Structure probing data (2A3 and DMS) for a 207-nucleotide construct.
2A3 adducts were read by reverse transcription with SuperScript II with manganese.
RNA sequence: GGGAACGACUCGAGUAGAGUCGAAAAGACGCCUUUAGAAGAAGAGGCUAGGGGGUAUUCCGGUGUGGGAUACUUAGUCAUAUGCAACGCUAAUUGCAUAAGAUUGUAGGACGGAAUUUACAGUCUUUAGAGAUAAGCACGUUCGCGUGCUUAUCAAGAUAUCUUUAGCCUUCGGGCUAAAGAUAUCAAAAGAAACAACAACAACAAC
Reactivity to 2A3 in 0.01 (KOAc 150mM, MgCl2 10mM, bicine 150mM(pH8.5), 24C), signal-to-noise 7, nucleotides 027 to 156: g030a010c060g030c010c000u060u060u090a200g030a300a010g020a050a010g010a050g020g010c030u050a060g000g030g010g010g030u040a040u030u020c020c030g050g080u180g030u140g070g060g010a030u030a080c020u020u080a020g010u010c000a030u020a000u070g000c000a020a030c070g050c220u160a120a120u080u010g000c000a010u000a020a040g010a010u040u090g060u080a010g010g050a010c030g000g040a020a020u080u100u100a130c060a020g020u000c000u030u080u080a100g030a000g000a080u000a000a000g000c000a000c010g010u040u070c170g020c010g090u000g000c000u000u000a000u000c000a000a000
Reactivity to DMS in 0.01 (KOAc 150mM, MgCl2 10mM, bicine 150mM(pH8.5), 24C), signal-to-noise 2, nucleotides 027 to 156: g000a110c100g010c020c020u010u000u000a120g010a160a180g000a170a080g000a060g020g000c030u000a050g000g000g020g060g010u000a070u000u000c040c020g020g000u010g040u000g010g020g000a100u000a010c020u000u000a040g020u010c030a160u000a010u010g010c010a020a050c080g030c230u010a100a110u000u000g010c000a030u000a020a050g000a030u000u000g020u010a030g010g000a140c040g000g000a010a160u010u000u010a050c050a110g000u000c000u000u010u000a090g000a180g000a010u000a000a000g020c000a000c010g020u000u000c300g040c030g000u000g000c000u010u000a010u010c010a050a080

It was measured as part of the RMDB library M2RFPK. The DMS profile rests on 4,066 reads. Reactivities are given for positions 27 through 156.